[RMDB]
Source: RMDB library OK1LIB, as collected in RNAgym. An RNA of 177 nucleotides, treated with DMS and 2A3 and read out base by base. The RNA was probed in 150 mM KOAc, 10 mM MgCl2 and 150 mM bicine (pH 8.5) at 24 C. DMS adducts were read by reverse transcription with MarathonRT. The DMS profile rests on 32,749 reads.
RNA sequence: GGGAACGACUCGAGUAGAGUCGAAAAUUGCGCAAUAAACCGCACAAGUCUCCGGCCACGUAUGAAAUGGAGUGGCACAGCGUAAAAGAAUGGCGCCAAUUGGAUGAAAACAUAACCCUUCUGUGCGCAAUUUAAGCGAUUUCGAUCGCUUAAAUUGAAAAGAAACAACAACAACAAC
Reactivity to DMS in 0.01 (KOAc 150mM, MgCl2 10mM, bicine 150mM(pH8.5), 24C), signal-to-noise 9, nucleotides 027 to 126: u020u010g010c040g000c030a070a050u030a070a080a120c200c030g010c010a050c070a040a050g000u000c020u000c020c060g010g010c020c010a030c020g000u020a130u030g010a080a120a120u030g000g020a210g010u000g000g000c020a110c150a100g010c050g020u010a040a080a140a080g000a060a040u010g010g000c050g010c030c040a120a100u030u010g000g010a080u010g010a090a070a070a090c110a060u030a110a120c030c010c020u010u000c020u000g010u010g000c020g010
Reactivity to 2A3 in 0.01 (KOAc 150mM, MgCl2 10mM, bicine 150mM(pH8.5), 24C), signal-to-noise 9, nucleotides 027 to 126: u070u060g020c040g000c020a010a070u100a230a090a040c060c010g020c010a010c010a070a040g030u020c010u000c050c010g040g000c020c000a030c010g150u180a080u240g170a040a100a060u220g060g050a110g020u020g000g000c020a010c020a040g040c020g050u090a040a050a030a020g140a030a090u110g060g000c010g000c040c020a060a150u120u140g050g020a050u060g100a080a080a070a000c060a060u150a100a090c000c010c000u050u050c050u050g050u020g020c030g000